[RMDB]
RNA sequence: GGGAACGACUCGAGUAGAGUCGAAAACAGCAUCUGAAAAAGCGCCGCACAAAGAAAUAGCCCCGCUAAAGGCGACAUAUAGACCAGCAACGCCGAACCUAAAAGGCUUUUUUCGGCGAUGCCCAACUCAAGCUAACUCGUUCGCGAGUUAGCUUGAAAAAGAAACAACAACAACAAC
Reactivity to 2A3 in 0.01 (KOAc 150mM, MgCl2 10mM, bicine 150mM(pH8.5), 24C), signal-to-noise 1, nucleotides 027 to 126: c020a000g050c000a100u040c060u090g080a060a070a060a170a060g000c010g000c000c010g000c020a000c030a040a130a010g140a060a060a010u030a020g000c000c000c000c000g050c040u050a070a070a050g040g000c010g060a010c020a000u120a060u010a040g020a070c080c060a000g000c020a080a000c010g010c020c000g020a000a020c000c000u120a100a090a030a070g020g000c000u060u060u000u000u000u010c000g010g000c000g000a010u010g000c000c000c040a000a100c010